Conditions: 150 mM KOAc, 10 mM MgCl2 and 150 mM bicine (pH 8.5), 24 C. An RNA of 177 nucleotides, treated with DMS and 2A3 and read out base by base. For 2A3, 1,697 sequencing reads were counted. 2A3 adducts were read by reverse transcription with SuperScript II with manganese.
RNA sequence: GGGAACGACUCGAGUAGAGUCGAAAAUGAUGAUUCCAUCAUCUAUGAUUGAGUUGCGAAAACUUCUGGAUAGGUAUCCUACAUCUGAACCGAAUUCUUUCUGGUUAAAGAAUCUCUUUCUAGUUGCCGUACAACCGCAAUUCGUUGCGGUUGUACGAAAAGAAACAACAACAACAAC
Reactivity to DMS in 0.01 (KOAc 150mM, MgCl2 10mM, bicine 150mM(pH8.5), 24C), signal-to-noise 2, nucleotides 027 to 126: u040g000a000u000g000a030u020u040c130c090a120u000c090a000u000c010u010a150u000g000a150u000u000g000a110g080u000u030g000c070g010a030a100a090a020c050u020u010c050u000g000g000a020u060a010g000g040u030a030u000c130c030u060a110c170a030u030c010u030g000a140a030c170c030g030a050a030u030u000c010u000u000u030c030u010g000g090u010u000a000a110a020g000a030a060u000c060u020c060u000u000u000c070u080a040g000u000u000g060c300
Reactivity to 2A3 in 0.01 (KOAc 150mM, MgCl2 10mM, bicine 150mM(pH8.5), 24C), signal-to-noise 4, nucleotides 027 to 126: u180g010a010u060g000a030u140u150c130c020a020u030c010a000u000c020u040a140u120g040a120u060u070g020a050g010u050u050g050c100g090a090a120a080a070c010u080u030c050u120g040g020a040u020a100g000g050u060a040u010c040c010u020a040c060a120u030c070u070g010a020a030c030c040g010a050a050u100u080c050u010u120u070c100u180g150g000u150u150a110a010a000g040a030a060u010c040u020c000u040u100u000c020u060a030g030u020u080g070c030
For DMS, 1,470 sequencing reads were counted.